[RMDB]
RNA sequence: GGGAACGACUCGAGUAGAGUCGAAAACUCUAACUUCGGUUAGAGCUAUCUCCUAAGUCUCCGUGAGGUUCUGGGAGGGAGUGUCGGAAACGACAUUUCCCGAAGAACAGAACUCCCCACCACGGAGAUAUGGAUCUACGACAUGUUCGCAUGUCAAGACACAUCAGAUGUUCGCAUCUGAUGUGUCAAAAGAAACAACAACAACAAC
Reactivity to DMS in 0.01 (KOAc 150mM, MgCl2 10mM, bicine 150mM(pH8.5), 24C), signal-to-noise 1, nucleotides 027 to 156: c000u000c000u010a030a020c010u010u000c170g050g000u000u030a000g000a010g020c010u000a040u000c070u020c010c040u020a110a190g020u000c000u010c000c050g010u000g020a300g020g000u000u000c010u050g010g010g000a300g050g000g020a050g000u010g000u000c000g030g020a150a150a240c000g000a050c000a020u000u000u000c000c000c000g000a060a140g010a120a100c000a050g000a020a010c060u000c160c020c000c020a300c090c010a020c040g040g010a010g000a000u000a010u000g020g010a110u000c080u000a150c020g000a030c020a080u020g000u000u020c280g070c040a080u000g020u010c000a080a180
Reactivity to 2A3 in 0.01 (KOAc 150mM, MgCl2 10mM, bicine 150mM(pH8.5), 24C), signal-to-noise 2, nucleotides 027 to 156: c000u000c000u000a020a000c000u070u100c300g100g000u000u000a000g000a000g000c010u100a150u070c160u000c020c010u090a170a080g000u000c000u000c000c000g010u000g010a020g090g000u010u000c010u000g000g050g000a090g010g000g000a010g000u000g000u010c000g000g020a090a040a120c010g000a000c020a010u300u300u050c000c000c000g070a180a010g020a030a020c000a000g000a000a000c050u150c050c050c010c040a030c000c000a000c010g000g000a000g000a000u000a000u010g000g000a000u050c060u240a060c110g010a000c000a010u030g020u050u130c160g000c110a000u010g040u070c000a010a030
An RNA of 207 nucleotides, treated with DMS and 2A3 and read out base by base. Values cover nucleotides 27 to 156. The reactions ran in a buffer of 150 mM KOAc, 10 mM MgCl2 and 150 mM bicine (pH 8.5), at 24 C. For 2A3 the reverse transcriptase was SuperScript II with manganese.